[RMDB]
RNA sequence: GGGAACGACUCGAGUAGAGUCGAAAACUGCAGCGCAAAGGCGACGGAGAUGUCGGCCACGGUCAUGCGCUCGCCGACGAGGAAGGUGCGGGUCUCCAGCCACAGCUCCAGACCCGCAAGGCUCUCCCAUCGACUGGCUAUUCGUAGCCAGUCGAUGAAAAGAAACAACAACAACAAC
Reactivity to 2A3 in 0.01 (KOAc 150mM, MgCl2 10mM, bicine 150mM(pH8.5), 24C), signal-to-noise 4, nucleotides 027 to 126: c020u030g020c030a000g010c000g000c030a090a020a180g030g010c020g050a030c020g130g120a160g030a140u220g040u040c020g120g170c000c010a040c030g110g120u150c080a070u100g030c010g000c010u010c030g020c000c010g120a110c050g000a040g100g050a120a020g090g020u050g020c030g000g000g000u000c000u020c020c000a000g010c020c080a190c100a090g010c020u030c060c000a000g010a010c000c010c000g000c000a000a010g020g020c010u020c000u000c040c000
Reactivity to DMS in 0.01 (KOAc 150mM, MgCl2 10mM, bicine 150mM(pH8.5), 24C), signal-to-noise 3, nucleotides 027 to 126: c030u010g010c040a030g000c010g020c010a030a110a190g000g000c020g010a010c040g010g020a180g030a150u030g010u020c010g000g000c000c070a050c060g020g030u040c180a110u010g000c000g010c030u000c200g000c020c090g000a210c220g000a030g000g010a100a100g000g000u020g010c000g000g000g030u000c000u020c050c300a050g020c010c170a060c250a130g000c020u030c110c300a040g000a000c010c000c010g000c020a010a000g060g020c020u020c000u000c000c050